[RMDB]
RNA sequence: GGGAACGACUCGAGUAGAGUCGAAAAGUGCGUGCAGCUGCUUCCAGCGCCGUCAGCACGGCAGCCUUUCCUCGCAGCUUCUGCAGUCGAGGAACGAAACGCAACCGGUGACACACCGCCAUGCUGAAUGCCUAUACUGAUUCGUCAGUAUAGGCAUAAAAGAAACAACAACAACAAC
Reactivity to 2A3 in 0.01 (KOAc 150mM, MgCl2 10mM, bicine 150mM(pH8.5), 24C), signal-to-noise 9, nucleotides 027 to 126: g090u060g020c030g020u040g040c060a060g010c040u030g010c020u150u050c080c050a040g030c030g000c050c010g060u040c010a000g020c020a000c010g020g010c010a040g000c000c010u020u030u010c000c000u000c010g000c030a070g000c020u220u160c080u300g040c040a060g040u280c020g010a010g020g010a010a010c040g040a050a040a010c060g000c020a030a050c030c010g040g000u050g050a080c030a010c010a010c170c010g020c010c020a070u080g010c010u020g040a100
Reactivity to DMS in 0.01 (KOAc 150mM, MgCl2 10mM, bicine 150mM(pH8.5), 24C), signal-to-noise 8, nucleotides 027 to 126: g010u000g010c010g020u010g010c100a110g020c010u010g000c060u010u010c090c080a130g010c040g010c060c040g010u000c040a060g000c030a100c100g000g000c030a070g010c040c050u000u000u000c000c000u000c010g000c070a160g000c030u030u030c230u060g010c020a120g020u040c020g000a030g000g000a010a010c140g000a060a070a050c080g010c030a060a130c140c010g000g020u010g000a110c110a110c060a050c010c020g000c040c030a090u010g010c020u010g000a170
Chemical mapping of a 177-nucleotide RNA with 2A3 and DMS.
Reactivities are given for positions 27 through 126.
For 2A3, 22,810 sequencing reads were counted.
For DMS the reverse transcriptase was MarathonRT.
The data come from the RNA Mapping Database (RMDB), library OK1LIB.
The DMS profile rests on 24,396 reads.
Conditions: 150 mM KOAc, 10 mM MgCl2 and 150 mM bicine (pH 8.5), 24 C.